Record summary: The data come from the RNA Mapping Database (RMDB), library TTRINS. An RNA of 177 nucleotides, treated with DMS and read out base by base. The reactions ran in a buffer of 150 mM KOAc, 10 mM MgCl2 and 150 mM bicine (pH 8.5), at 24 C.

RNA sequence: GGGAACGACUCGAGUAGAGUCGAAAAGAUAUGGAUGUAUUACGGGAGUCAGAAAGAAGCAAGUGGCGACUCGGAAACGAGUCACCAUGAUGACCUUCCUUCUGACUCCCGUAAUACAUCCUAAGUCCAUCUCAAUUGUGUUCGCACAAUUGAGAUGAAAAGAAACAACAACAACAAC
Reactivity to DMS in 0.01 (KOAc 150mM, MgCl2 10mM, bicine 150mM(pH8.5), 24C), signal-to-noise 2, nucleotides 027 to 126: g000a120u010a300u010g010g010a010u000g010u010a000u000u000a000c000g000g000g010a010g000u000c000a000g010a010a000a000g010a000a000g010c030a050a130g030u000g000g010c030g000a010c000u010c010g010g000a100a130a170c000g000a030g000u000c000a010c010c000a000u000g020a050u000g020a100c300c000u000u000c000c040u000u010c000u010g000a010c010u000c000c000c000g000u000a000a000u000a000c000a010u000c000c010u000a000a070g020u000c050